Conditions: 150 mM KOAc, 10 mM MgCl2 and 150 mM bicine (pH 8.5), 24 C. Structure probing data (2A3 and DMS) for a 177-nucleotide construct. Values cover nucleotides 27 to 126. For 2A3 the reverse transcriptase was SuperScript II with manganese. DMS adducts were read by reverse transcription with MarathonRT.
[RMDB]
RNA sequence: GGGAACGACUCGAGUAGAGUCGAAAAAAAGUUAGCGUACUAGAGUCGCCGUGAGUACGCUAUGGUUCCGUGAGACUCUACUCGAGCGUAUCACGGAACCCACGUACUUACCGUACGUGCUAUAAAACCUGUACACAAUGUUCGCAUUGUGUACAGGAAAAGAAACAACAACAACAAC
Reactivity to 2A3 in 0.01 (KOAc 150mM, MgCl2 10mM, bicine 150mM(pH8.5), 24C), signal-to-noise 2, nucleotides 027 to 126: a000a000a000g100u030u000a000g010c000g000u000a010c010u030a040g050a080g200u090c070g050c130c040g130u130g050a000g000u010a000c000g000c000u000a020u010g000g020u050u000c030c010g000u030g020a040g010a010c000u040c010u020a020c000u000c010g000a000g000c000g010u010a060u040c010a000c000g030g010a030a040c020c020c000a000c000g000u000a000c010u100u100a100c060c060g000u000a000c010g000u010g030c040u090a120u100a150a070a000a060
Reactivity to DMS in 0.01 (KOAc 150mM, MgCl2 10mM, bicine 150mM(pH8.5), 24C), signal-to-noise 2, nucleotides 027 to 126: a050a040a070g010u010u000a020g000c000g000u000a000c010u000a110g000a060g030u000c030g020c070c060g040u020g000a030g000u000a000c000g010c020u000a020u010g020g000u000u000c030c010g020u000g010a240g000a030c000u010c000u000a010c020u000c010g000a020g010c100g010u010a040u010c020a070c030g000g010a060a050c030c060c000a000c000g010u000a000c000u000u000a140c300c230g020u010a000c000g020u010g010c100u000a080u010a050a070a080a070